[RMDB]
RNA sequence: GGGAACGACUCGAGUAGAGUCGAAAAAUGCUACGCGGCCGGCGCCGUAUAGCCGGCAUUAUAAUGCAUAUAUGCCGAUUAGCAUGCUAAUCGGCAUGCCGUAGCAUAUUAAUGCGCCGAUUAUAUAUAUACGCUCAUCUUUCGAGAUGAGCGUAUAAAAAGAAACAACAACAACAAC
Reactivity to DMS in 0.01 (KOAc 150mM, MgCl2 10mM, bicine 150mM(pH8.5), 24C), signal-to-noise 1, nucleotides 027 to 126: a020u000g000c010u000a010c020g010c080g050g020c000c030g000g020c040g040c180c180g010u010a070u010a090g020c010c040g000g040c000a010u000u010a070u000a120a080u010g020c080a050u020a040u000a030u000g000c000c010g000a030u010u000a010g020c060a140u010g030c040u010a010a020u000c000g000g020c020a000u000g020c100c060g020u000a020g020c020a000u000a080u000u000a050a050u010g020c100g020c000c020g040a080u010u000a040u010a110u000a100